[RMDB]
Structure probing data (DMS and 2A3) for a 207-nucleotide construct.
RNA sequence: GGGAACGACUCGAGUAGAGUCGAAAAAGUUCGCGCUUCCGUGAUACGCGAAAAUCGGACGGUGGCUGCAAGUCGCAUCGCAAAACCGCGGCAAGUGGAGUUAGCGAGAGGAGGCUGGGUUUUGGCUAGAACACACGGUACUUCGGUACCGUGUGAAGGUUAUUGUAUCCUUCGGGAUACAAUAACCAAAAGAAACAACAACAACAAC
Reactivity to DMS in 0.01 (KOAc 150mM, MgCl2 10mM, bicine 150mM(pH8.5), 24C), signal-to-noise 2, nucleotides 027 to 156: a120g000u010u000c020g020c020g030c030u000u000c040c150g010u000g020a160u000a020c040g000c010g030a030a030a040a090u020c020g030g000a130c010g010g030u000g000g000c030u000g030c030a080a100g000u000c060g010c020a160u000c070g000c030a080a050a120a120c080c050g050c020g000g010c030a050a090g030u000g040g010a160g020u000u000a110g010c040g010a040g030a110g000g010a080g050g030c060u010g010g040g010u000u000u000u020g010g000c050u000a060g020a140a300c000a040c000a000c000g000g000u010a010c000u020u010c300g090g020u000a010c000c010g000u010g010u000g000a010a040
Reactivity to 2A3 in 0.01 (KOAc 150mM, MgCl2 10mM, bicine 150mM(pH8.5), 24C), signal-to-noise 2, nucleotides 027 to 156: a000g100u040u050c030g000c010g000c060u150u060c060c030g040u050g090a050u080a130c020g000c010g020a030a020a030a100u090c040g030g030a010c010g010g000u020g000g030c050u070g020c050a060a020g030u020c020g010c020a070u020c040g030c100a010a070a040a040c040c000g010c010g060g020c080a070a100g030u100g060g000a030g010u070u100a020g040c030g010a040g010a020g040g000a060g040g000c060u060g030g010g010u030u080u050u130g040g000c010u060a040g030a170a000c000a000c000a000c020g000g000u010a000c010u020u050c100g110g000u000a000c000c000g000u000g000u000g000a010a000
The reactions ran in a buffer of 150 mM KOAc, 10 mM MgCl2 and 150 mM bicine (pH 8.5), at 24 C.